[RMDB]
RNA sequence: GGGAACGACUCGAGUAGAGUCGAAAAGUGCGAGGUCGAGGGUAGCUUACGAUCUUUGCAGUGUUUCAUGAGACCUGUAUCCAUGAAGCACUAGGUCUCAAACGUAGGACAAAGAUACCUCGCUGAAGAUACUGAAGCAUUUCGAUGUUUCAGUAUCAAAAGAAACAACAACAACAAC
Reactivity to DMS in 0.01 (KOAc 150mM, MgCl2 10mM, bicine 150mM(pH8.5), 24C), signal-to-noise 9, nucleotides 027 to 126: g010u020g010c010g010a020g000g010u000c050g010a150g010g010g010u030a130g010c010u000u000a020c030g000a120u020c090u000u010u010g010c100a030g020u000g000u000u000u000c020a010u000g010a150g010a030c100c140u020g010u050a240u000c020c020a020u010g000a020a010g000c010a000c000u000a030g010g010u030c070u010c070a030a040a110c050g010u010a030g000g010a080c050a090a080a090g010a130u020a030c000c000u000c000g010c010u010g000a110a100
Reactivity to 2A3 in 0.01 (KOAc 150mM, MgCl2 10mM, bicine 150mM(pH8.5), 24C), signal-to-noise 9, nucleotides 027 to 126: g180u100g000c000g000a000g000g010u040c030g040a110g040g060g050u110a040g030c000u010u010a010c010g060a080u080c000u050u030u040g030c020a010g000u000g010u000u000u000c020a020u010g030a030g020a300c060c200u200g140u240a080u000c010c000a010u010g010a010a000g000c000a000c010u010a040g070g070u020c020u000c000a030a040a020c010g010u010a010g000g020a030c020a020a100a010g030a020u070a040c000c000u000c000g000c000u010g010a060a030
The data come from the RNA Mapping Database (RMDB), library OK1LIB. An RNA of 177 nucleotides, treated with DMS and 2A3 and read out base by base. For 2A3 the reverse transcriptase was SuperScript II with manganese. Values cover nucleotides 27 to 126. For DMS, 72,347 sequencing reads were counted. For 2A3, 68,928 sequencing reads were counted. The RNA was probed in 150 mM KOAc, 10 mM MgCl2 and 150 mM bicine (pH 8.5) at 24 C.